About this RNA
The record gives the reactivity of an RNA of 207 nucleotides to 2A3 and DMS.
[RMDB]
RNA sequence: GGGAACGACUCGAGUAGAGUCGAAAAUCAGGCUUCGGCCUGAGCCGUCCGUAGGUCACUCUCCCCACCCGUCACUCCCCACCAAGAUGGUUCGAAAGAGCCAUACUUGAGGUGACGGAGGAGUGACCUAAACGGGAACUGCUCGAUUCGUCGAGAAAGUAAACAAUUGGUUCGCCAAUUGUUUACUAAAAGAAACAACAACAACAAC
Reactivity to 2A3 in 0.01 (KOAc 150mM, MgCl2 10mM, bicine 150mM(pH8.5), 24C), signal-to-noise 2, nucleotides 027 to 156: u010c010a010g000g000c010u070u130c250g190g020c000c000u000g000a020g040c020c020g050u050c040c110g060u010a010g000g000u010c000a010c000u000c050u090c050c060c010c000a060c000c000c020g010u000c000a000c010u120c030c050c020c000a040c000c000a010a000g000a000u000g030g000u000u000c000g010a080a090a040g000a010g050c010c000a010u050a100c000u000u000g000a000g010g000u000g000a000c000g000g000a010g000g000a000g000u000g000a000c000c000u020a080a060a020c010g000g000g000a060a050c020u010g000c000u000c000g000a000u010u010c030g010u000c010g020a020g100a260a220
Reactivity to DMS in 0.01 (KOAc 150mM, MgCl2 10mM, bicine 150mM(pH8.5), 24C), signal-to-noise 2, nucleotides 027 to 156: u000c020a050g020g050c000u000u010c300g010g020c040c000u040g000a040g000c020c040g010u000c000c030g050u010a030g050g030u000c000a030c010u000c010u030c110c040c000c070a300c270c030c000g020u000c000a020c040u000c240c050c090c060a300c220c000a050a020g000a050u000g010g030u010u020c010g010a070a090a250g030a030g000c000c010a020u000a010c010u000u010g000a240g010g000u020g000a020c010g030g010a100g030g000a070g000u000g020a000c000c020u000a000a000a030c060g010g000g020a110a140c070u020g010c000u000c020g040a090u000u010c060g000u000c020g000a080g010a180a120
2A3 adducts were read by reverse transcription with SuperScript II with manganese.